[RMDB]
RNA sequence: GGGAACGACUCGAGUAGAGUCGAAAAUAUCGAACAUCUCAUGUAUUGCUAUCUAUUCUCUACUUACAAGAUACCUAAAAACGUUAUGUUGGCAAUCAAACGCAAAUUAGAGGUGGAAUAAUAGUGAAAUACUGAAAAUAUUCGUAUUUUCAGUAUUAAAAGAAACAACAACAACAAC
Reactivity to 2A3 in 0.01 (KOAc 150mM, MgCl2 10mM, bicine 150mM(pH8.5), 24C), signal-to-noise 6, nucleotides 027 to 126: u100a020u050c040g010a040a030c020a090u020c030u040c070a040u130g070u150a120u070u120g020c010u010a020u070c020u020a050u110u010c040u000c020u040a080c030u110u050a040c020a040a050g040a140u090a090c030c020u100a120a070a020a040a020c010g020u070u020a140u220g090u070u040g100g020c030a060a060u030c020a070a100a010c030g010c030a060a080a080u050u050a080g020a010g110g010u020g010g030a020a020u100a060a010u010a010g050u040g030a010
Reactivity to DMS in 0.01 (KOAc 150mM, MgCl2 10mM, bicine 150mM(pH8.5), 24C), signal-to-noise 9, nucleotides 027 to 126: u010a080u010c100g010a110a110c110a060u010c040u010c060a140u020g020u010a080u000u000g010c040u000a040u000c110u000a060u010u010c040u000c040u000a050c070u000u000a100c140a060a120g000a110u010a060c070c030u010a040a070a070a100a070c060g000u000u010a060u000g010u000u000g010g010c110a060a060u010c060a040a050a070c120g000c060a040a060a090u000u000a060g010a050g010g020u000g000g000a050a060u000a040a050u000a040g010u000g000a080